[RMDB]
RNA sequence: GGGAACGACUCGAGUAGAGUCGAAAAGCUGGGCACGUGUGUCUACCAUUGAGUUAUUUGCAGCCAGAUCAGCUGUUUGGUGGCCGACAGCCAGCGCUAUCACAAGCACUGUGGCAGGCUGUUGGUAGCUCUAUCAUGACUUCGGUCAUGAUAGAGCAAAAGAAACAACAACAACAAC
Reactivity to 2A3 in 0.01 (KOAc 150mM, MgCl2 10mM, bicine 150mM(pH8.5), 24C), signal-to-noise 2, nucleotides 027 to 126: g080c010u040g050g030g000c020a000c090g130u100g020u030g050u060c030u000a060c010c000a030u000u180g140a060g150u130u120a130u140u160u120g000c040a010g000c020c000a040g000a190u020c040a000g000c060u040g040u150u170u100g060g040u050g090g010c000c010g000a000c010a020g010c050c010a060g010c040g000c080u170a110u300c010a020c000a070a160g070c100a070c250u040g000u040g070g000c000a040g030g040c010u000g010u000u020g020g000u030a020
Reactivity to DMS in 0.01 (KOAc 150mM, MgCl2 10mM, bicine 150mM(pH8.5), 24C), signal-to-noise 3, nucleotides 027 to 126: g000c050u010g000g000g020c020a060c070g050u000g010u010g040u010c040u010a160c040c030a140u000u000g000a090g020u010u000a090u000u010u000g000c070a150g010c040c020a120g010a090u010c040a040g000c050u000g000u000u000u000g000g010u010g030g010c010c010g010a000c020a030g010c020c010a090g030c040g020c100u020a080u000c070a090c080a140a130g030c110a080c160u010g010u000g020g030c090a070g000g000c000u000g030u000u010g020g000u000a040